[RMDB]
RNA sequence: GGGAACGACUCGAGUAGAGUCGAAAAUAAAACAGUGCGUGGUAGCACUACCAUGACCAUGUUUCGGCACAUGGUCAGCCGAGUACAGCUUCGCCUGUACUCAGCGAACAACUACAACAACAAAAAACUAGAAAUGCAAGUUCGCUUGCAUUUCUAGAAAAGAAACAACAACAACAAC
Reactivity to DMS in 0.01 (KOAc 150mM, MgCl2 10mM, bicine 150mM(pH8.5), 24C), signal-to-noise 2, nucleotides 027 to 126: u000a100a100a080a080c140a010g000u000g020c000g000u000g020g000u010a090g000c000a020c000u000a120c040c010a300u000g000a020c010c000a020u000g000u010u020u010c250g010g020c100a180c000a000u000g000g010u000c000a000g060c010c020g010a000g000u000a010c000a000g020c030u000u000c300g020c120c000u000g000u000a020c000u000c000a010g010c000g000a070a070c270a010a040c050u000a010c100a020a020c040a000a010c010a010a070a090a030a050a080
Reactivity to 2A3 in 0.01 (KOAc 150mM, MgCl2 10mM, bicine 150mM(pH8.5), 24C), signal-to-noise 2, nucleotides 027 to 126: u110a010a030a010a010c060a030g000u010g030c030g000u060g060g110u110a030g000c000a000c000u020a030c000c010a050u030g000a010c000c000a000u010g030u030u100u150c160g140g030c080a000c000a010u000g000g000u020c000a000g000c000c000g000a000g010u000a000c000a010g020c030u220u290c090g080c090c020u000g000u010a000c010u000c000a010g020c040g020a040a030c020a060a010c000u080a020c040a110a030c010a030a000c030a030a160a010a000a000a020